[RMDB]
RNA sequence: GGGAACGACUCGAGUAGAGUCGAAAAUAUGAAACUGAGCCCAGAUCCAGCCAAUCGUUCACCUCCUCAUAACAAGUCUAACUGGCUCGGGGAAGCUGAAAGGGCUGCACUAAAAUAACAUAGAUGAAAGAAGAUUUACCUUCGGGUAAAUCUUCUUAAAAGAAACAACAACAACAAC
Reactivity to 2A3 in 0.01 (KOAc 150mM, MgCl2 10mM, bicine 150mM(pH8.5), 24C), signal-to-noise 1, nucleotides 027 to 126: u300a060u050g050a000a110a000c080u080g000a030g000c020c000c000a000g010a000u000c030c050a000g160c010c000a000a200u130c140g080u070u000c030a100c040c000u000c000c000u000c000a030u000a140a230c140a110a100g000u000c000u030a000a210c010u060g000g000c000u000c000g000g000g010g000a030a030g000c050u110g000a210a090a290g040g030g000c070u100g020c000a000c030u130a040a000a000a110u080a040a040c100a080u150a030g110a060u190g170a030
Reactivity to DMS in 0.01 (KOAc 150mM, MgCl2 10mM, bicine 150mM(pH8.5), 24C), signal-to-noise 2, nucleotides 027 to 126: u020a080u000g040a120a060a060c110u030g000a130g000c000c000c020a120g020a100u070c100c000a030g000c040c110a130a030u060c070g000u000u010c040a050c000c050u000c000c000u000c000a100u060a080a110c300a160a040g000u000c000u000a180a020c210u020g000g000c010u020c110g000g000g000g000a020a120g010c100u020g000a070a140a120g000g000g010c010u030g000c100a040c130u000a100a070a060a070u010a080a110c120a050u040a010g000a140u010g000a040